[RMDB]
RNA sequence: GGGAACGACUCGAGUAGAGUCGAAAAUUGAAACACGGACCAAGGAGUCUAACAUCCACGCGAGUGUUCGGGUGUCAAACCCGUGCGCGCAGUGAAAGCGAACGGAGGUGGGAGCCCGCAAGGGUGCUUUAUACUGAUCCUUCGGGAUCAGUAUAAAAAAAGAAACAACAACAACAAC
Reactivity to DMS in 0.01 (KOAc 150mM, MgCl2 10mM, bicine 150mM(pH8.5), 24C), signal-to-noise 7, nucleotides 027 to 126: u010u010g010a090a060a070c070a080c110g000g000a100c060c040a140a160g010g010a110g010u020c050u000a100a080c100a100u020c040c020a090c060g000c080g010a130g010u010g010u020u010c000g010g010g010u000g010u030c200a060a100a080c020c000c000g020u000g000c020g020c000g010c070a090g020u020g010a080a060a120g010c030g010a080a080c120g000g000a080g010g000u010g010g000g000a190g000c010c020c020g000c250a060a080g000g010g020u000g000c110
Reactivity to 2A3 in 0.01 (KOAc 150mM, MgCl2 10mM, bicine 150mM(pH8.5), 24C), signal-to-noise 5, nucleotides 027 to 126: u060u070g020a000a040a000c060a020c040g020g030a000c010c030a130a140g150g000a070g030u020c020u050a060a020c020a090u010c020c010a030c030g050c010g020a040g060u120g030u050u040c020g010g010g000u060g080u200c130a070a090a020c020c000c020g000u020g000c010g000c000g000c020a020g040u050g150a120a040a020g040c010g030a060a050c060g030g010a040g010g020u070g020g020g010a030g040c010c010c020g010c030a040a060g020g010g010u010g000c000